Chemical mapping of a 170-nucleotide RNA with 2A3 and DMS. Conditions: 150 mM KOAc, 10 mM MgCl2 and 150 mM bicine (pH 8.5), 24 C. For 2A3, 1,017 sequencing reads were counted. The data come from the RNA Mapping Database (RMDB), library 15KLIB.
RNA sequence: GGGAACGACUCGAGUAGAGUCGAAAAUCCAGCAAACUUGCGUGUUGUUGGUCAUGCCAUGCAAGGCACUCUUUUGAAGUUGACUGUCGAUGUUGCUAACCCUAGCACUCCAGCCUACACUUUUACACACGCGAGACGUUCGCGUCUCGCAAAAGAAACAACAACAACAAC
Reactivity to 2A3 in 0.01 (KOAc 150mM, MgCl2 10mM, bicine 150mM(pH8.5), 24C), signal-to-noise 1, nucleotides 027 to 129: u010c000c000a000g080c090a000a040a110c040u070u080g060c020g100u000g050u000u000g000u000u020g010g010u050c030a050u000g050c020c010a110u300g000c120a020a020g010g090c000a030c000u200c170u070u070u180u160g000a060a050g000u230u040g060a080c000u000g030u080c000g100a100u000g000u220u000g000c030u000a060a010c000c000c000u000a060g000c000a000c000u000c000c000a040g000c000c000u000a000c050a010c000u120u070u040u030a130c120a000c000a030c000
Reactivity to DMS in 0.01 (KOAc 150mM, MgCl2 10mM, bicine 150mM(pH8.5), 24C), signal-to-noise 3, nucleotides 027 to 129: u070c000c000a210g060c160a000a100a190c000u020u110g060c040g000u000g010u110u000g030u080u070g070g000u050c070a190u050g010c080c030a100u040g070c270a160a040g030g000c020a120c090u000c000u000u030u060u000g000a000a100g030u000u000g000a060c000u000g090u040c110g000a040u090g100u060u000g010c020u030a050a070c160c090c140u020a060g030c000a000c150u030c000c050a020g000c030c000u000a060c250a100c020u030u000u000u040a090c050a090c080a090c020